The record gives the reactivity of an RNA of 177 nucleotides to 2A3 and DMS. For DMS the reverse transcriptase was MarathonRT. The RNA was probed in 150 mM KOAc, 10 mM MgCl2 and 150 mM bicine (pH 8.5) at 24 C. The 2A3 profile rests on 8,129 reads. For DMS, 3,823 sequencing reads were counted. It was measured as part of the RMDB library M2PK50.
RNA sequence: GGGAACGACUCGAGUAGAGUCGAAAACGUCCUAGUUUCGACUAGGACGAAAUAAAAUCAGCGGUAAAUAAUCGAGGCGUAUUAGCGCUGAACGCCUCGAUAAAAUGCGAUGAUUCGUCAUCGCAAACGAGAAGCUAUGAUUCGUCAUAGCUUCUCGAAAAGAAACAACAACAACAAC
Reactivity to 2A3 in 0.01 (KOAc 150mM, MgCl2 10mM, bicine 150mM(pH8.5), 24C), signal-to-noise 5, nucleotides 027 to 126: c010g000u000c000c000u010a010g000u010u070u060c220g070a010c000u000a010g000g010a000c000g000a000a010a000u100a000a050a000a070u070c020a010g030c020g110g100u120a090a110a080u180a130a080u090c010g000a000g000g000c000g000u020a080u080u160a060g060c040g000c060u020g020a000a000c000g000c000c000u000c010g000a000u010a010a060a010a010u070g000c010g010a000u000g000a010u000u060c160g060u010c070a000u010c000g000c000a020a020a000
Reactivity to DMS in 0.01 (KOAc 150mM, MgCl2 10mM, bicine 150mM(pH8.5), 24C), signal-to-noise 3, nucleotides 027 to 126: c020g040u000c000c000u000a030g000u000u010u020c190g010a020c000u000a010g000g000a000c000g010a020a030a040u000a050a050a080a080u000c030a030g020c040g010g020u000a020a070a090u000a040a030u010c040g000a010g000g020c000g020u000a110u010u000a070g000c020g010c010u000g010a060a020c000g010c000c000u000c010g000a030u010a010a030a080a070u020g010c000g020a010u000g000a010u000u020c160g010u010c000a000u000c000g010c000a000a020a040